[RMDB]
RNA sequence: GGGAACGACUCGAGUAGAGUCGAAAAGACUGAGAGUGCUCGCUGAAAGAGGCUGCGACGCGGGUUAUUCAGUUCGAUGCGCCCAGGCUGACGGUAGGACGCCUAACCCGAUUCAGACUACUCCUUGCAGUUUGUACAUGUUCGCAUGUACAAACUGAAAAGAAACAACAACAACAAC
Reactivity to DMS in 0.01 (KOAc 150mM, MgCl2 10mM, bicine 150mM(pH8.5), 24C), signal-to-noise 2, nucleotides 027 to 126: g020a070c040u000g000a090g010a150g020u000g010c050u000c050g030c030u020g000a160a050a150g000a130g000g030c030u000g030c050g000a150c170g000c000g000g020g000u000u030a060u000u000c050a010g000u000u000c030g000a170u010g010c130g000c010c000c010a100g040g000c060u010g000a090c130g010g000u000a110g030g000a110c120g010c060c010u000a020a110c070c020c000g010a130u000u000c100a110g000a090c070u000a130c130u000c040c090u000u000g020
Reactivity to 2A3 in 0.01 (KOAc 150mM, MgCl2 10mM, bicine 150mM(pH8.5), 24C), signal-to-noise 1, nucleotides 027 to 126: g020a010c020u000g000a020g010a020g190u060g020c000u000c020g020c010u040g050a030a130a030g140a140g140g040c040u030g040c030g030a000c040g000c000g010g010g000u000u090a070u170u040c020a030g040u060u050c030g010a070u090g040c010g050c010c000c010a010g020g070c030u010g010a030c030g040g020u040a020g080g020a020c020g030c000c030u000a020a030c030c000c000g040a060u000u090c030a030g000a120c010u020a040c060u050c050c000u000u050g080